This 177-nucleotide RNA was probed chemically with 2A3 and DMS.
[RMDB]
RNA sequence: GGGAACGACUCGAGUAGAGUCGAAAAUAGGGCGCGUAAAGAGGUGCCGUCGAUCAUGCGCAUUUCGACAAAGAACUGUCCGUUGAUCUCGCCGUAGUCAUGGAUCGGCACGAUGUGUGGCUCGGUCAGUGCGUCCAUGAUUCGUCAUGGACGCACUAAAAGAAACAACAACAACAAC
Reactivity to 2A3 in 0.01 (KOAc 150mM, MgCl2 10mM, bicine 150mM(pH8.5), 24C), signal-to-noise 2, nucleotides 027 to 126: u200a040g050g020g070c070g030c040g080u100a010a150a030g050a050g000g100u060g010c100c030g030u030c050g040a110u070c000a050u110g020c060g000c050a020u040u060u020c080g040a060c050a080a120a020g060a110a020c020u080g060u010c110c020g010u020u040g050a120u010c010u010c060g010c000c010g070u140a030g000u080c020a020u090g010g020a010u040c000g020g180c150a030c150g010a020u110g060u010g010u000g300g030c000u010c000g000g000u030c040
Reactivity to DMS in 0.01 (KOAc 150mM, MgCl2 10mM, bicine 150mM(pH8.5), 24C), signal-to-noise 2, nucleotides 027 to 126: u010a120g010g010g030c010g020c070g010u020a100a150a140g010a090g010g030u030g000c040c030g020u020c070g050a090u010c100a070u000g020c130g000c030a040u000u000u010c030g010a060c100a070a120a160g010a080a080c090u000g000u000c000c050g000u030u020g030a080u030c040u010c090g030c020c000g000u000a030g010u000c020a040u010g010g000a080u000c030g000g010c170a070c160g000a070u000g040u000g030u000g000g000c090u000c040g010g020u000c110
For 2A3, 1,572 sequencing reads were counted.